[RMDB]
This 207-nucleotide RNA was probed chemically with 2A3 and DMS. The reactions ran in a buffer of 150 mM KOAc, 10 mM MgCl2 and 150 mM bicine (pH 8.5), at 24 C. The DMS profile rests on 3,285 reads.
RNA sequence: GGGAACGACUCGAGUAGAGUCGAAAAGUAGCAUUUGCCAGUUUCCAUGGUGUAAAUAUUCCCACCAUGGCUGAUCUGAUGUCACACUAACAACAUGAUGACAGUGGGCUCGCAAAACUCCUGAAAAUGGGCCGGGUUUGGUGGCUUAUGCCUGUAACUCAUUACCACCAUUCGUGGUGGUAAUGAGAAAAGAAACAACAACAACAAC
Reactivity to 2A3 in 0.01 (KOAc 150mM, MgCl2 10mM, bicine 150mM(pH8.5), 24C), signal-to-noise 3, nucleotides 027 to 156: g110u100a010g000c040a020u010u000u100g040c030c040a020g010u060u120u050c000c000a000u000g000g000u060g030u130a070a190a120u210a200u190u140c010c010c000a000c000c010a010u020g010g020c060u070g000a070u010c020u050g030a040u080g040u040c030a050c000a020c150u150a170a050c030a080a010c020a090u190g050a050u070g010a090c010a030g020u040g000g000g000c030u040c000g020c020a000a050a090a160c060u100c020c030u110g060a090a020a030a050u130g020g010g000c010c010g030g040g000u030u030u070g060g020u000g000g020c000u050u030a030u130g030c030c030u050g030u040a070a000
Reactivity to DMS in 0.01 (KOAc 150mM, MgCl2 10mM, bicine 150mM(pH8.5), 24C), signal-to-noise 2, nucleotides 027 to 156: g010u010a090g020c020a000u000u000u000g020c010c020a090g020u000u000u010c060c010a040u020g020g040u000g030u010a040a110a190u000a300u000u000c090c050c040a010c000c010a040u010g030g040c090u000g000a060u000c000u000g000a030u010g020u010c030a090c060a200c080u020a160a130c080a070a090c070a090u000g010a090u000g000a060c060a030g000u020g020g000g080c020u020c040g070c100a060a050a080a090c080u000c030c020u000g000a050a010a100a120u000g010g030g030c010c030g000g050g000u010u000u010g040g020u000g000g030c030u000u000a030u000g030c040c000u000g010u010a050a140